[RMDB]
RNA sequence: GGGAACGACUCGAGUAGAGUCGAAAACUUAUAGUCUUGUGUCAAUGUUAAGUUCUUAUUUUUGAUCAUUGCACUCUAGUUAUGGAACAGAAAGUCCUUAGUGAACCAUUUAGAAUAGGAAUAAAUGUAUUACCAAAGGGUUCGCCCUUUGGUAAUAAAAAGAAACAACAACAACAAC
Reactivity to 2A3 in 0.01 (KOAc 150mM, MgCl2 10mM, bicine 150mM(pH8.5), 24C), signal-to-noise 1, nucleotides 027 to 126: c010u050u100a040u090a210g070u070c010u060u100g000u020g070u100c000a000a000u010g020u060u140a080a060g070u080u040c040u060u140a240u130u130u030u070u090g080a070u130c000a000u010u030g000c000a000c070u000c060u010a030g030u070u120a050u100g060g020a030a040c030a090g110a070a090a000g040u060c020c020u080u070a110g030u090g090a050a040c020c000a030u070u080u070a070g020a110a060u050a110g090g000a090a020u020a180a100a050u200g000
Reactivity to DMS in 0.01 (KOAc 150mM, MgCl2 10mM, bicine 150mM(pH8.5), 24C), signal-to-noise 3, nucleotides 027 to 126: c100u020u010a090u000a090g010u010c090u000u020g000u000g000u000c040a040a060u000g010u000u000a070a110g020u000u000c050u000u000a070u000u010u010u000u000g010a060u010c060a030u010u000g020c030a040c010u010c100u000a070g000u000u010a090u010g000g020a040a130c060a100g020a110a110a140g000u000c040c020u000u000a060g010u000g000a080a100c120c070a040u010u010u010a040g000a050a030u010a040g000g000a060a080u000a020a100a050u010g000